Structure probing data (2A3 and DMS) for a 207-nucleotide construct. It was measured as part of the RMDB library M2RFPK.
RNA sequence: GGGAACGACUCGAGUAGAGUCGAAAAAGCCACCGCUACGGCGGUGGCAAGUAGAAAAGUUGGUGCUUAGACCACGCCCUCUACCGUAAUAAUAGAUAAAUAGGCGAGUAUCAGUACGCUCAUACAAAAAACACUCACACGUUCGCGUGUGAGUGAAGAGUACAACAAUCUUCGGAUUGUUGUACUCAAAAGAAACAACAACAACAAC
Reactivity to 2A3 in 0.01 (KOAc 150mM, MgCl2 10mM, bicine 150mM(pH8.5), 24C), signal-to-noise 4, nucleotides 027 to 156: a000g000c010c000a010c000c000g000c000u040a030c190g130g020c030g000g010u000g000g000c000a010a010g010u020a000g020a040a030a010a000g050u090u060g030g000u060g040c150u250u090a030g050a040c020c000a010c010g000c000c010c010u000c010u030a030c020c050g100u070a100a020u100a200a010u080a180g110a060u130a100a140a060u110a040g040g000c030g030a020g030u060a050u190c080a040g080u050a030c050g030c020u040c050a060u150a200c160a020a110a010a010a020a010c000a010c000u000c000a000c000a000c000g030u060u040c170g030c000g110u000g000u000g000a000g000u000g000a000a000
Reactivity to DMS in 0.01 (KOAc 150mM, MgCl2 10mM, bicine 150mM(pH8.5), 24C), signal-to-noise 1, nucleotides 027 to 156: a180g000c020c020a000c000c000g060c040u000a140c300g080g050c010g220g010u000g000g120c010a020a020g000u000a120g020a120a060a030a070g110u020u020g020g000u000g000c070u000u010a200g020a030c020c020a150c020g010c020c000c020u000c020u000a050c010c010g030u000a110a160u010a070a210u020a070g020a090u000a040a040a130u020a030g000g030c000g030a120g070u000a070u010c100a100g000u020a130c140g010c060u020c020a050u010a160c060a000a060a020a120a080a190c010a020c000u000c020a000c000a010c000g050u000u000c300g080c000g100u020g040u010g000a030g010u000g010a000a020
The reactions ran in a buffer of 150 mM KOAc, 10 mM MgCl2 and 150 mM bicine (pH 8.5), at 24 C. For DMS, 1,796 sequencing reads were counted. Reactivities are given for positions 27 through 156.